[RMDB]
RNA sequence: GGGAACGACUCGAGUAGAGUCGAAAAUCGUCUAAAAACGUAGCGUUUGUUGCGCCACCUAAUACUGGUGAUGCGAUUUUACCUACGCCACCAGCAAGUGCCUGACCCAUAGAAAUCUUUUCGGAUUGCUUUUUAGCAUAACGAAAAGAUUCACUGAGUAUCGAUGUUUUUUCGAAAACAUCGAUACAAAAGAAACAACAACAACAAC
Reactivity to 2A3 in 0.01 (KOAc 150mM, MgCl2 10mM, bicine 150mM(pH8.5), 24C), signal-to-noise 4, nucleotides 027 to 156: u040c010g050u010c040u100a120a060a060a030a030c040g020u040a010g030c020g060u040u050u060g040u020u070g000c010g000c030c000a020c010c010u110a200a110u150a270c140u100g000g000u020g010a070u070g020c010g010a030u050u070u100u220a050c010c000u020a030c010g000c020c000a020c020c000a010g020c040a070a070g020u030g080c000c030u030g050a060c000c000c010a020u050a090g080a020a060a020u000c000u030u000u000u000c010g000g090a170u100u060g010c000u120u130u100u060u300a010g000c010a010u060a110a050c000g000a000a000a000a000g000a000u010u000c000a000c030u090g020a020
Reactivity to DMS in 0.01 (KOAc 150mM, MgCl2 10mM, bicine 150mM(pH8.5), 24C), signal-to-noise 2, nucleotides 027 to 156: u010c080g020u000c080u010a020a050a080a090a070c020g020u010a080g000c050g030u020u010u000g020u000u000g000c000g000c050c020a020c020c030u000a090a150u010a120c190u000g000g030u000g000a050u010g020c000g000a050u000u010u000u020a080c100c000u000a050c050g020c000c020a050c070c020a110g030c060a040a090g010u010g010c040c010u000g000a270c010c000c010a070u010a100g030a070a040a010u000c000u010u000u000u010c000g010g000a300u000u000g000c010u000u010u000u000u000a040g040c000a020u000a090a270c000g000a030a000a020a000g000a020u000u010c030a200c050u000g010a300
Structure probing data (2A3 and DMS) for a 207-nucleotide construct.
The RNA was probed in 150 mM KOAc, 10 mM MgCl2 and 150 mM bicine (pH 8.5) at 24 C.
The data come from the RNA Mapping Database (RMDB), library OK3TST.
2A3 adducts were read by reverse transcription with SuperScript II with manganese.